[RMDB]
RNA sequence: GGGAACGACUCGAGUAGAGUCGAAAAAGCGCAUGCGGCUUCUUCUCGCGGCGCACGCGUUCUGGGCGCGCACGGGCGGCGCGAACGCGUGCCGCUUCGACGUCGUCGCGUUCGAAGGCGGCCGGCAGCGAUCAGUACUAUUCGUAGUACUGAUCGCAAAAGAAACAACAACAACAAC
Reactivity to 2A3 in 0.01 (KOAc 150mM, MgCl2 10mM, bicine 150mM(pH8.5), 24C), signal-to-noise 3, nucleotides 027 to 126: a000g110c060g000c050a070u180g060c010g020g040c000u040u000c000u050u020c030u050c010g000c010g000g000c000g000c020a010c010g000c000g040u080u110c170u300g100g110g040c050g000c000g000c050a050c060g060g130g000c050g050g020c050g010c050g100a270a050c200g040c020g240u030g050c020c020g010c000u080u170c040g090a060c060g020u210c030g020u020c000g020c000g010u080u080c060g010a020a020g040g000c050g000g020c040c010g050g000c000a010
Reactivity to DMS in 0.01 (KOAc 150mM, MgCl2 10mM, bicine 150mM(pH8.5), 24C), signal-to-noise 3, nucleotides 027 to 126: a080g000c080g040c060a100u010g020c010g000g000c040u000u010c040u010u000c110u010c010g020c060g000g000c010g010c080a070c050g000c020g000u000u000c120u010g030g010g020c020g010c020g020c110a150c140g000g010g030c020g000g010c000g010c040g010a070a050c230g000c020g020u010g000c000c030g000c020u000u000c040g020a130c120g010u010c080g000u010c060g020c010g010u000u000c100g010a030a070g010g000c090g000g000c010c000g010g000c100a120
Structure probing data (2A3 and DMS) for a 177-nucleotide construct. DMS adducts were read by reverse transcription with MarathonRT. For DMS, 3,449 sequencing reads were counted. The reactions ran in a buffer of 150 mM KOAc, 10 mM MgCl2 and 150 mM bicine (pH 8.5), at 24 C.